[RMDB]
RNA sequence: GGGAACGACUCGAGUAGAGUCGAAAAGCGCGAAGCGGUGUAGCGUCACUCUGAUGGCGGUACUAUGAAUUGAUGCAAGGUGUGGAGCGACCUUAAACAGUUCUGGUGGUGCUCUGAAUGGAGUGCUUGAGGCCUCGCCGAUUCGUCGGCGAGGCAACGUGCAGGAAUAGUUCGCUAUUCCUGCACGAAAAGAAACAACAACAACAAC
Reactivity to 2A3 in 0.01 (KOAc 150mM, MgCl2 10mM, bicine 150mM(pH8.5), 24C), signal-to-noise 4, nucleotides 027 to 156: g040c040g020c020g060a050a010g030c040g030g030u070g020u040a050g050c010g020u000c020a020c020u150c000u120g140a290u060g030g020c030g020g080u040a060c020u050a060u150g080a060a060u070u100g060a070u090g070c050a020a060g000g000u060g020u090g010g030a010g000c010g000a000c000c010u040u110a080a050a000c010a030g010u010u010c020u020g020g030u060g010g070u030g000c020u020c020u050g090a050a050u260g020g000a010g000u010g040c030u050u080g100a070g070g040c000c000u000c000g010c000c010g000a010u020u020c190g050u010c000g050g000c000g000a000g000g000c000a000a000

The record gives the reactivity of an RNA of 207 nucleotides to 2A3. Source: RMDB library M2RFPK, as collected in RNAgym. Conditions: 150 mM KOAc, 10 mM MgCl2 and 150 mM bicine (pH 8.5), 24 C. 2A3 adducts were read by reverse transcription with SuperScript II with manganese. The 2A3 profile rests on 2,506 reads.